[RMDB]
An RNA of 207 nucleotides, treated with 2A3 and read out base by base.
RNA sequence: GGGAACGACUCGAGUAGAGUCGAAAAACAUAGAUUGCUUUCGUUUCACAUUGCUGGAAAAUCAGUAUGAGUGGACAGUCAUCCUAGUUGACUCUCAAAAUCAUUUCUCUUCCAGACAGAGACUUUGCUACUCCCAAGUGAAAACAAGGUUAAUGCAAUCGGCAUUUACUUUCGAGUAAAUGCCGAUAAAAGAAACAACAACAACAAC
Reactivity to 2A3 in 0.01 (KOAc 150mM, MgCl2 10mM, bicine 150mM(pH8.5), 24C), signal-to-noise 2, nucleotides 027 to 156: a000c010a050u200a030g120a070u010u100g020c030u040u040u090c080g020u000u040u060c000a060c030a170u020u140g000c030u020g010g030a020a100a020a140u160c020a020g010u000a030u050g020a040g060u050g010g060a000c030a010g040u000c030a040u070c010c070u120a110g070u070u000g000a020c000u010c010u010c000a140a130a090a160u040c020a130u070u210u010c040u010c000u070u050c020c030a030g000a030c020a030g000a000g010a010c090u090u040u130g040c030u040a150c010u010c000c000c000a040a030g020u010g070a030a040a010a030c030a010a040g080g000u130u070a100a010u110g010c060a000
Notes:
Values cover nucleotides 27 to 156. Conditions: 150 mM KOAc, 10 mM MgCl2 and 150 mM bicine (pH 8.5), 24 C. The 2A3 profile rests on 644 reads. The data come from the RNA Mapping Database (RMDB), library OK3TST.